[RMDB]
RNA sequence: GGGAACGACUCGAGUAGAGUCGAAAAUCAAAAAAAGUGUUGACGCAAAGGUGACGCAAUGAUAAUAUAAUAAACAAGGAGGUGGUUCAAAAGUGACGGCAAAGAAGAGAGUAACUGUUAGAAUGCCAGACGAAUUAAAUGAAGAGCUACAUAGACAAAGUUAAAUCAUAUUCGUAUGAUUUAACUUAAAAGAAACAACAACAACAAC
Reactivity to DMS in 0.01 (KOAc 150mM, MgCl2 10mM, bicine 150mM(pH8.5), 24C), signal-to-noise 3, nucleotides 027 to 156: u030c040a020a000a080a110a040a060a070g000u000g050u000u000g010a070c030g030c040a060a080a110g030g030u000g040a090c060g020c050a060a070u010g010a070u000a040a100u000a110u000a080a090u010a090a060a070c030a070a080g010g010a070g010g020u000g030g010u020u000c080a020a050a090a100g020u000g010a060c020g010g000c050a030a040a100g000a030a080g000a100g000a150g000u000a030a060c050u000g000u000u000a100g020a050a070u010g000c030c030a110g020a090c020g020a050a050u000u000a040a050a100u000g010a060a070g000a100g030c030u000a020c060a110u000a110g030a090c060a080
Reactivity to 2A3 in 0.01 (KOAc 150mM, MgCl2 10mM, bicine 150mM(pH8.5), 24C), signal-to-noise 3, nucleotides 027 to 156: u080c020a000a010a020a030a000a040a040g050u050g030u070u030g070a050c050g000c080a050a050a050g020g000u040g010a020c030g000c030a030a060u030g040a010u030a130a070u100a040u060a130a110u110a070a100a010c030a050a000g020g000a020g010g040u020g020g000u050u070c040a030a020a020a080g040u040g020a010c020g000g030c020a030a060a000g030a020a000g010a000g000a010g010u060a040a030c010u000g000u010u020a020g030a120a030u040g010c050c010a040g000a010c040g030a040a080u150u140a190a120a050u080g010a000a020g000a000g010c010u050a000c040a060u060a040g040a040c040a030

Structure probing data (DMS and 2A3) for a 207-nucleotide construct. The DMS profile rests on 6,286 reads. Conditions: 150 mM KOAc, 10 mM MgCl2 and 150 mM bicine (pH 8.5), 24 C. The 2A3 profile rests on 2,260 reads.